[RMDB]
RNA sequence: GGGAACGACUCGAGUAGAGUCGAAAAGAACAUUACUGUGCAAGCUGUGAAGGGUGGAGUUUUUGGAUAGCUGGUUUGGGAUACAUCCAGGAGGAAGUGGGCUACAAGCUAAAAUUGAUCUGUGCCCUCCGAUAUCCUAUUUCGAUAGGAUAUCGGAAAAAGAAACAACAACAACAAC
Reactivity to DMS in 0.01 (KOAc 150mM, MgCl2 10mM, bicine 150mM(pH8.5), 24C), signal-to-noise 4, nucleotides 027 to 126: g010a110a100c100a090u010u000a100c100u000g000u000g010c080a090a100g020c060u000g010u000g000a080a070g000g010g020u020g000g010a060g010u000u000u000u000u000g000g020a070u000a070g020c040u000g010g010u000u000u000g010g010g000a130u010a110c100a050u000c040c050a060g020g010a080g010g010a060a090g020u010g010g010g010c040u010a060c100a060a050g000c080u000a050a030a050a080u000u000g000a060u000c060u000g010u000g000c000c000c030
Reactivity to 2A3 in 0.01 (KOAc 150mM, MgCl2 10mM, bicine 150mM(pH8.5), 24C), signal-to-noise 2, nucleotides 027 to 126: g020a050a010c040a050u080u150a100c030u090g020u070g090c050a060a030g040c060u030g020u050g120a040a050g060g030g000u050g030g030a080g020u020u010u060u100u070g070g020a050u040a010g040c040u010g030g010u060u060u110g030g000g010a030u040a120c020a040u030c000c010a020g040g000a020g080g000a060a040g020u030g010g000g010c000u070a020c040a050a030g000c010u120a030a040a110a130u070u070g010a040u000c020u010g040u060g010c000c000c000